[RMDB]
RNA sequence: GGGAACGACUCGAGUAGAGUCGAAAAUGUGAAAUCUAUUAGUCUUCGAUAUGAAAUUCUCUGUCUCUGUAAAAGCAUUUCAUAUUUACAAGACACAGGCCUACUCCUAGGGCAGCAAAAAGUGGCACAAUAAGCCAUACUUCGGUAUGGCUUAUUGAAAAGAAACAACAACAACAAC
Reactivity to 2A3 in 0.01 (KOAc 150mM, MgCl2 10mM, bicine 150mM(pH8.5), 24C), signal-to-noise 2, nucleotides 027 to 126: u130g040u040g060a110a080a030u110c100u100a180u150u130a200g020u000c020u000u020c050g000a030u000a020u020g010a010a010a010u080u040c030u000c030u040g190u160c050u030c050u250g110u130a040a100a030a000g000c020a000u000u030u000c020a000u020a060u040u080u050a060c070a030a010g000a000c020a000c010a070g080g090c000c020u010a010c010u030c000c010u040a050g060g100g000c010a030g050c070a010a030a090a110a050g120u100g060g030c050a010
Reactivity to DMS in 0.01 (KOAc 150mM, MgCl2 10mM, bicine 150mM(pH8.5), 24C), signal-to-noise 4, nucleotides 027 to 126: u000g020u010g010a060a070a080u000c090u010a090u020u010a110g010u000c010u000u000c060g000a010u000a000u000g000a020a010a030u000u010c030u010c100u000g000u010c090u000c130u010g010u000a060a060a040a060g010c120a040u000u000u000c010a000u000a010u000u000u020a080c160a030a020g020a020c000a090c170a070g010g010c020c010u000a070c070u000c020c020u000a100g010g010g020c020a090g030c140a050a060a020a050a060g000u000g000g010c120a150
Background:
This 177-nucleotide RNA was probed chemically with 2A3 and DMS. Reactivities are given for positions 27 through 126. The data come from the RNA Mapping Database (RMDB), library OK2TRN. For DMS, 3,569 sequencing reads were counted. For 2A3 the reverse transcriptase was SuperScript II with manganese. Values are in units of 0.01, from 0 to 300, in steps of 10. The RNA was probed in 150 mM KOAc, 10 mM MgCl2 and 150 mM bicine (pH 8.5) at 24 C.